[RMDB]
RNA sequence: GGGAACGACUCGAGUAGAGUCGAAAAUCACGUGAAUAACAACGCGUCGUGCGAAAACUUCAUAGCGCAACAUGAAUCUGGAGGCGCGGCUACGGACAGGGAGACCAUUACGACGGUGGAGAGUGUGACCCACGGUCUGAUUCGUCAGACCGUGGGUAAAAGAAACAACAACAACAAC
Reactivity to 2A3 in 0.01 (KOAc 150mM, MgCl2 10mM, bicine 150mM(pH8.5), 24C), signal-to-noise 2, nucleotides 027 to 126: u160c020a010c040g070u090g040a110a000u060a150a000c100a100a010c120g000c000g200u130c000g000u060g040c090g010a040a080a080a080c050u030u030c040a250u030a200g070c100g000c050a000a160c070a040u210g140a140a050u050c030u000g090g040a000g000g000c000g000c050g020g000c000u020a000c020g030g030a000c040a010g000g100g000a020g000a000c000c000a020u100u110a150c120g070a070c030g040g000u010g090g000a100g000a170g090u140g000u170g070
Reactivity to DMS in 0.01 (KOAc 150mM, MgCl2 10mM, bicine 150mM(pH8.5), 24C), signal-to-noise 2, nucleotides 027 to 126: u000c060a120c040g000u000g000a110a160u000a120a080c180a080a100c200g000c270g050u010c050g050u020g000c170g010a090a030a060a290c210u000u000c160a040u050a100g020c060g050c000a180a060c050a090u010g000a100a010u000c020u000g020g000a060g030g010c070g100c020g000g010c020u000a000c090g010g000a030c040a040g000g000g000a150g000a160c080c040a010u000u020a010c120g000a010c050g000g050u010g010g000a210g010a080g000u000g000u070g080